Annotation
The record gives the reactivity of an RNA of 177 nucleotides to 2A3 and DMS. 2A3 adducts were read by reverse transcription with SuperScript II with manganese. DMS adducts were read by reverse transcription with MarathonRT. The reactions ran in a buffer of 150 mM KOAc, 10 mM MgCl2 and 150 mM bicine (pH 8.5), at 24 C. For DMS, 1,672 sequencing reads were counted.
RNA sequence: GGGAACGACUCGAGUAGAGUCGAAAAGGGGAGCGCAUGAAGGGAAGCUCUACAAUGCACUCACUAGGGUGACAAGCAGUGUUCUCCACACAAUGACCCAUUAUUCGGAGGCAGAGACCUUUUGGAACCUCAUGGUAUCCUUCGGGAUACCAUGAGGAAAAGAAACAACAACAACAAC
Reactivity to 2A3 in 0.01 (KOAc 150mM, MgCl2 10mM, bicine 150mM(pH8.5), 24C), signal-to-noise 3, nucleotides 027 to 126: g030g000g000g010a010g010c070g010c070a140u060g050a080a050g070g030g030a010a040g020c010u000c000u020a020c080a000a070u060g040c040a020c110u160c020a070c110u090a090g030g000g000u030g080a040c030a040a050g030c070a010g010u000g000u020u000c020u030c020c000a080c000a000c010a070a180u150g060a110c020c010c080a070u110u180a070u140u120c020g040g000a010g030g020c040a040g140a070g120a300c040c040u120u030u130u190g080g030a050a050
Reactivity to DMS in 0.01 (KOAc 150mM, MgCl2 10mM, bicine 150mM(pH8.5), 24C), signal-to-noise 2, nucleotides 027 to 126: g000g010g000g000a030g000c060g000c000a040u020g000a190a030g000g010g070a100a300g030c040u020c030u000a040c060a090a120u010g000c020a040c090u000c030a170c280u000a030g000g000g010u000g000a190c020a010a010g020c190a080g020u000g000u000u020c000u000c010c000a170c180a140c120a050a090u010g000a010c000c000c000a150u080u070a100u000u000c000g030g000a060g000g020c050a070g000a200g010a150c040c010u000u010u000u000g020g000a020a070